[RMDB]
RNA sequence: GGGAACGACUCGAGUAGAGUCGAAAAUGACGUGGCGCCGUGGUGGGCCGAGAAUUCCAAGGAGUGCUACUCGUCGGGGUUGGCCGAUCUGGCCCAGGACCUGGCUAAUUGGAAAGCUGGCAAGAACUGUGUAAAUACAAUUCGUUGUAUUUACACAAAAAGAAACAACAACAACAAC
Reactivity to 2A3 in 0.01 (KOAc 150mM, MgCl2 10mM, bicine 150mM(pH8.5), 24C), signal-to-noise 5, nucleotides 027 to 126: u110g050a010c050g030u030g030g020c040g000c030c020g030u040g020g040u060g000g030g010c010c020g020a030g040a040a090u080u000c020c000a020a030g070g010a050g040u130g170c030u060a060c010u020c040g080u030c030g020g000g000g030u060u080g040g000c020c010g020a100u050c060u110g010g010c000c030c000a020g060g040a040c010c000u010g020g000c020u030a090a070u070u030g050g010a070a040a010g010c020u020g030g000c030a040a050g040a110a030c080
Reactivity to DMS in 0.01 (KOAc 150mM, MgCl2 10mM, bicine 150mM(pH8.5), 24C), signal-to-noise 9, nucleotides 027 to 126: u010g010a090c090g020u000g010g010c080g010c030c030g020u000g010g020u000g010g010g020c020c020g000a080g010a080a100u000u000c010c020a070a100g010g010a070g010u010g020c130u010a090c040u000c060g010u000c080g000g000g010g010u000u000g010g010c030c030g010a070u010c070u010g010g010c020c010c110a110g010g000a080c040c040u000g010g010c020u000a060a110u000u010g010g000a060a070a100g010c030u000g000g010c080a090a090g010a080a100c220
Chemical mapping of a 177-nucleotide RNA with 2A3 and DMS. For 2A3, 18,173 sequencing reads were counted. Values cover nucleotides 27 to 126.